[RMDB]
RNA sequence: GGGAACGACUCGAGUAGAGUCGAAAAACCGCCAGAAUCUUGGCGAUGUAUGGGAUCAGCGGCAGGUUCAGGAUCAGCAGAAUCAGGUUGCCCAGAUACAUCGAAAUGAUGACUGCCCAAAAGAUCUUAUGAUGGGUAAUUUCGAUUACCCAUCAUAAAAAGAAACAACAACAACAAC
Reactivity to DMS in 0.01 (KOAc 150mM, MgCl2 10mM, bicine 150mM(pH8.5), 24C), signal-to-noise 7, nucleotides 027 to 126: a100c050c030g020c060c020a010g010a300a040u010c030u010u010g000g010c010g010a020u010g010u010a050u010g000g000g000a050u020c090a130g020c050g010g030c030a040g020g010u000u000c020a080g010g020a300u020c160a090g000c090a070g010a050a050u000c040a110g000g000u020u000g000c030c010c020a040g000a130u010a040c010a030u000c010g000a070a040a070u020g000a020u000g000a130c050u010g000c010c000c010a070a070a100a100g010a080u010c040u000
Reactivity to 2A3 in 0.01 (KOAc 150mM, MgCl2 10mM, bicine 150mM(pH8.5), 24C), signal-to-noise 8, nucleotides 027 to 126: a000c030c010g010c040c010a040g020a110a090u030c010u040u040g060g010c010g000a000u030g020u040a050u050g020g010g040a080u200c020a030g050c040g150g010c080a070g030g010u020u020c020a030g140g060a220u130c060a020g080c040a020g030a030a020u050c020a040g100g050u040u040g010c000c000c000a040g030a050u050a020c000a010u010c020g030a080a050a080u140g000a010u020g070a060c010u050g040c000c000c000a040a180a020a010g040a040u010c010u020

Conditions: 150 mM KOAc, 10 mM MgCl2 and 150 mM bicine (pH 8.5), 24 C. An RNA of 177 nucleotides, treated with DMS and 2A3 and read out base by base. For 2A3 the reverse transcriptase was SuperScript II with manganese. Values cover nucleotides 27 to 126.